[RMDB]
RNA sequence: GGGAACGACUCGAGUAGAGUCGAAAAGAUAUGGAGUAUGACCCCUGCUCGGGCUGGACAUGCGUGUAAGUGUCGGAAACGACAUAUCACGCAACAGCCAGCCGAGCAGGGGUCAUACUCCUAAGUCCACCUAUAGGUAGUUCGCUACCUAUAGGUGAAAAGAAACAACAACAACAAC
Reactivity to DMS in 0.01 (KOAc 150mM, MgCl2 10mM, bicine 150mM(pH8.5), 24C), signal-to-noise 2, nucleotides 027 to 126: g010a050u000a300u000g010g020a050g020u000a020u010g000a020c030c000c000c000u000g000c010u000c000g010g080g020c000u010g010g020a030c150a300u000g000c000g000u020g010u000a080a300g010u000g020u010c010g010g020a100a080a300c000g000a010c000a010u000a300u000c010a000c000g010c000a050a050c230a200g000c000c000a010g000c000c000g000a000g000c000a010g000g000g000g000u030c000a000u000a010c010u000c000c000u000a010a110g010u000c030
Conditions: 150 mM KOAc, 10 mM MgCl2 and 150 mM bicine (pH 8.5), 24 C. An RNA of 177 nucleotides, treated with DMS and read out base by base. It was measured as part of the RMDB library TTRINS. Values cover nucleotides 27 to 126.